[RMDB]
RNA sequence: GGGAACGACUCGAGUAGAGUCGAAAAUACCGCGUCUUCGGACGCGGUAAGAUCCCGUCGGAAAACCUGAGAGACGGAGAUGAAGAGACUGAAGCUACGCAAUGACUGCCGGAUUCGUCCGGCAGAAACACACGCUUUUAUUCGUAAAAGCGUGUGUAAAAGAAACAACAACAACAAC
Reactivity to DMS in 0.01 (KOAc 150mM, MgCl2 10mM, bicine 150mM(pH8.5), 24C), signal-to-noise 2, nucleotides 027 to 126: u000a010c020c000g020c010g020u000c000u000u010c230g040g010a010c010g040c000g040g020u000a010a030g000a140u000c010c000c030g020u010c060g020g000a100a090a080a100c050c040u000g010a190g020a140g020a080c050g000g010a090g000a050u000g000a110a090g000a140g000a050c080u000g020a090a080g000c040u010a050c100g020c130a040a050u010g010a200c010u000g010c020c000g000g000a040u000u000c170g010u010c010c000g000g000c010a000g000a030a080
Reactivity to 2A3 in 0.01 (KOAc 150mM, MgCl2 10mM, bicine 150mM(pH8.5), 24C), signal-to-noise 1, nucleotides 027 to 126: u050a030c000c010g010c000g040u040c030u000u090c210g140g000a010c000g000c030g000g040u000a000a020g010a000u030c030c020c020g020u050c010g100g090a110a070a090a160c010c040u080g020a070g000a030g000a100c030g040g020a160g020a040u050g050a030a100g050a000g040a040c040u040g050a070a020g060c040u090a020c060g040c110a050a160u120g040a120c010u000g010c000c000g000g000a030u000u000c080g050u030c000c000g000g000c000a010g000a000a000
This 177-nucleotide RNA was probed chemically with DMS and 2A3. 2A3 is a SHAPE reagent: it acylates the 2'-hydroxyl of flexible nucleotides of all four kinds. Reactivities are given for positions 27 through 126. The reactions ran in a buffer of 150 mM KOAc, 10 mM MgCl2 and 150 mM bicine (pH 8.5), at 24 C. For 2A3 the reverse transcriptase was SuperScript II with manganese.